RNA sequence: GGGAACGACUCGAGUAGAGUCGAAAAACCGUAUCGGUGUCCCUGAGCAGACCGGCGGGACGAUUCUUUCAUGGCGGGGCCUGUGCAUACCCCGUUUCAUCACCGGUUUGCAAACCUGAUUAGAGCGUAUUCGUCUCAAUUUCGAUUGAGACGAAUAAAAAGAAACAACAACAACAAC
Reactivity to 2A3 in 0.01 (KOAc 150mM, MgCl2 10mM, bicine 150mM(pH8.5), 24C), signal-to-noise 8, nucleotides 027 to 126: a000c050c010g060u170a170u170c160g000g000u020g030u030c000c010c000u020g050a040g010c000a010g000a000c000c000g010g020c060g030g070g050a030c080g030a060u200u070c070u090u180u080c090a040u110g040g000c000g000g000g000g020c030c060u270g060u140g090c010a030u080a170c010c000c000c000g020u020u040u070c010a050u050c000a000c000c000g000g000u010u000u000g000c000a020a010a000c020c030u070g040a130u070u170a080g040a020g130c090g010
Reactivity to DMS in 0.01 (KOAc 150mM, MgCl2 10mM, bicine 150mM(pH8.5), 24C), signal-to-noise 7, nucleotides 027 to 126: a020c020c010g010u030a070u030c050g010g010u000g000u000c010c010c000u000g010a260g010c010a010g020a020c010c000g020g000c120g010g010g000a120c240g000a130u020u020c090u000u020u020c100a100u010g000g000c010g010g010g010g010c180c080u010g020u030g010c090a090u030a270c010c000c010c010g010u000u000u040c030a040u020c060a130c010c010g000g000u000u000u000g000c000a030a090a160c100c090u010g000a080u030u010a080g010a120g010c090g020